An RNA of 177 nucleotides, treated with DMS and 2A3 and read out base by base. The reactions ran in a buffer of 150 mM KOAc, 10 mM MgCl2 and 150 mM bicine (pH 8.5), at 24 C. 2A3 is a SHAPE reagent: it acylates the 2'-hydroxyl of flexible nucleotides of all four kinds.
RNA sequence: GGGAACGACUCGAGUAGAGUCGAAAAUAACUCAGUAUCUAUUGAUACGUCUAUACUCAGUGAAUCACUGAGUUCAUAGAACCUCUUCUACACGUCGACAAGAUUAUUUCUUGUGUUUGCCAGUCAUUUAGAACGUAAUUUUCGAAUUACGUUCUAAAAAAGAAACAACAACAACAAC
Reactivity to DMS in 0.01 (KOAc 150mM, MgCl2 10mM, bicine 150mM(pH8.5), 24C), signal-to-noise 9, nucleotides 027 to 126: u020a080a130c070u000c060a120g010u000a010u000c000u010a130u020u040g010a020u000a010c050g000u000c020u010a020u010a050c020u000c000a000g010u000g010a190a170u020c070a020c000u000g000a010g000u000u010c140a020u000a010g010a060a160c090c040u010c040u000u000c040u010a060c070a080c100g010u010c050g010a090c020a020a020g000a030u010u020a100u010u010u000c010u000u000g010u000g010u000u000u000g000c020c030a130g000u020c120a100u010
Reactivity to 2A3 in 0.01 (KOAc 150mM, MgCl2 10mM, bicine 150mM(pH8.5), 24C), signal-to-noise 9, nucleotides 027 to 126: u120a020a030c030u010c080a020g020u010a020u000c030u050a260u170u300g010a010u010a020c020g020u000c010u010a040u030a060c000u000c000a010g020u020g130a300a240u280c030a030c010u010g000a000g000u010u080c030a010u010a020g030a030a030c000c010u050c040u120u040c030u080a060c050a020c110g140u080c030g080a020c010a020a020g010a040u080u070a120u140u300u020c010u010u020g010u010g020u050u070u070g080c040c030a040g050u100c030a060u020

DMS adducts were read by reverse transcription with MarathonRT.